[RMDB]
RNA sequence: GGGAACGACUCGAGUAGAGUCGAAAAGAUAUGGACCAGGUGGAUGCGUGAUGACCUCGGAAACGAGCAAGCGCGCCACUGGUCCUAAGUCAAAACGUCUGACGUCUGUUCGCAGACGUCAGACGAAGUAAUUUGUAACGUUCGCGUUACAAAUUACAAAAGAAACAACAACAACAAC
Reactivity to 2A3 in 0.01 (KOAc 150mM, MgCl2 10mM, bicine 150mM(pH8.5), 24C), signal-to-noise 5, nucleotides 027 to 126: g020a020u070a030u110g000g000a010c010c010a050g160g230u130g050g120a300u150g010c010g010u050g030a280u180g040a130c030c020u000c000g050g000a100a070a030c000g000a000g010c030a160a060g010c000g000c000g000c000c000a010c000u000g010g010u000c000c000u000a000a000g010u010c010a010a040a070a130c010g000u010c010u010g000a000c000g000u010c000u030g090u080u160c300g010c130a000g010a000c000g000u000c010a000g000a000c000g010a000a000
Reactivity to DMS in 0.01 (KOAc 150mM, MgCl2 10mM, bicine 150mM(pH8.5), 24C), signal-to-noise 5, nucleotides 027 to 126: g020a040u000a300u010g010g010a020c000c010a020g020g020u010g020g000a020u020g030c000g040u010g000a110u010g010a090c300c000u000c010g010g000a100a100a170c010g000a010g000c040a070a160g020c000g000c000g010c000c000a030c000u000g010g000u010c000c000u000a000a040g010u010c020a070a060a110a160c020g000u000c000u010g000a020c000g010u000c010u000g010u000u020c240g020c000a010g000a010c000g010u000c000a000g000a000c000g000a000a040
This 177-nucleotide RNA was probed chemically with 2A3 and DMS. The RNA was probed in 150 mM KOAc, 10 mM MgCl2 and 150 mM bicine (pH 8.5) at 24 C.